[RMDB]
RNA sequence: GGGAACGACUCGAGUAGAGUCGAAAAAGAAAGAGCGUAGCACACACUCAGACUAAGUCUGACACACACCUACGGUAAACAUCUUAGUGUGUGAUCGAGAUAUCGAUGUGUGUGUAAGAUGAAAAAAACGUGUAGUAGUCUUCGGACUACUACACGUAAAAGAAACAACAACAACAAC
Reactivity to 2A3 in 0.01 (KOAc 150mM, MgCl2 10mM, bicine 150mM(pH8.5), 24C), signal-to-noise 2, nucleotides 027 to 126: a000g160a050a080a000g120a020g090c030g010u030a010g010c020a000c010a010c000a000c000u000c010a020g020a000c050u150a120a120g040u000c000u000g010a000c000a000c000a000c000a000c020c030u010a020c000g030g020u110a080a190a000c030a030u040c020u040u030a010g000u000g000u000g000u000g010a000u000c010g040a000g040a110u180a090u190c020g000a000u040g000u000g010u020g000u000g000u000a000a000g000a000u080g110a110a070a000a000a000a000
Reactivity to DMS in 0.01 (KOAc 150mM, MgCl2 10mM, bicine 150mM(pH8.5), 24C), signal-to-noise 2, nucleotides 027 to 126: a060g000a100a080a100g000a140g000c030g010u000a300g000c020a010c020a010c000a010c000u010c000a020g010a010c040u020a100a120g020u000c000u000g010a040c000a000c000a000c000a000c010c010u010a070c020g020g020u020a110a090a100c080a050u010c010u010u000a100g010u000g010u000g010u010g000a040u000c020g000a030g000a160u020a110u010c000g010a020u000g020u000g000u000g010u000g000u000a000a020g000a070u000g000a000a000a050a080a050a020
The data come from the RNA Mapping Database (RMDB), library M2PK90. The record gives the reactivity of an RNA of 177 nucleotides to 2A3 and DMS. The reactions ran in a buffer of 150 mM KOAc, 10 mM MgCl2 and 150 mM bicine (pH 8.5), at 24 C.